[RMDB]
The record gives the reactivity of an RNA of 177 nucleotides to DMS and 2A3. As a SHAPE reagent, 2A3 marks flexible, mostly unpaired nucleotides at the ribose 2'-OH.
RNA sequence: GGGAACGACUCGAGUAGAGUCGAAAAGAUAGCGUAUUAUCGCUAUUAUGCGAUAGCGGCGUAUGCGGCGAUAUAUAUAGCGCGCCGCAUAUAUAUAUAUUAUCGCUAUUAUAUACGCCGCGCGCGCCUUCGGAACAUUAUUCGUAAUGUUCCGAAGAAAAGAAACAACAACAACAAC
Reactivity to DMS in 0.01 (KOAc 150mM, MgCl2 10mM, bicine 150mM(pH8.5), 24C), signal-to-noise 3, nucleotides 027 to 126: g000a060u000a040g010c000g040u010a150u020u010a080u010c010g020c000u000a040u000u000a060u000g030c020g010a090u010a080g040c020g000g010c010g030u000a020u000g020c150g010g000c000g020a030u000a010u000a030u000a040u000a030g000c070g020c170g010c160c130g030c060a020u010a030u010a120u000a050u000a030u000a020u000u000a050u010c010g010c020u000a080u010u010a060u010a060u000a020c010g010c010c000g030c000g000c040g020c010g010c120
Reactivity to 2A3 in 0.01 (KOAc 150mM, MgCl2 10mM, bicine 150mM(pH8.5), 24C), signal-to-noise 2, nucleotides 027 to 126: g040a000u050a020g020c000g010u080a160u230u070a070u280c000g020c020u010a090u080u060a070u240g010c000g070a060u030a050g000c010g000g020c000g000u020a030u060g080c050g010g040c000g010a010u000a000u000a010u020a010u020a040g050c030g000c030g040c080c080g030c040a000u030a000u000a000u010a000u000a000u010a000u000u070a020u030c000g000c020u040a080u210u070a090u060a010u000a080c000g040c140c000g000c020g010c000g000c000g020c010

For DMS the reverse transcriptase was MarathonRT.
Conditions: 150 mM KOAc, 10 mM MgCl2 and 150 mM bicine (pH 8.5), 24 C.